Notes:
This 207-nucleotide RNA was probed chemically with 2A3. For 2A3 the reverse transcriptase was SuperScript II with manganese.

RNA sequence: GGGAACGACUCGAGUAGAGUCGAAAAUGACGCCUAUAACUGGAUGAAGCAUAUUAUACAUAAUGGUUUUGUAGGCAACCUUAAUAUGUAUAGUCUUGUCUUUAUCGUUACACGAUAAUCAAUUUAUAAAACAGCUCCCCCUUCGGGGGGAGCUGAACGUAUACUAAUUCUUCGGAAUUAGUAUACGAAAAGAAACAACAACAACAAC
Reactivity to 2A3 in 0.01 (KOAc 150mM, MgCl2 10mM, bicine 150mM(pH8.5), 24C), signal-to-noise 2, nucleotides 027 to 156: u120g080a100c060g010c010c000u050a030u020a130a080c070u030g030g000a000u030g000a010a000g000c000a020u010a000u010u030a020u050a040c050a050u220a170a180u290g010g000u020u030u020u040g030u050a020g000g040c010a000a000c000c000u040u020a110a020u020a100u060g000u000a010u000a000g000u010c000u030u020g080u050c040u000u070u000a010u010c000g030u030u150a090c160a020c060g070a010u080a060a070u060c050a040a040u030u170u110a260u180a110a110a010a000c000a010g000c000u000c050c000c080c000c010u000u010c050g040g010g010g010g000g010a000g000c000u000g000a000a000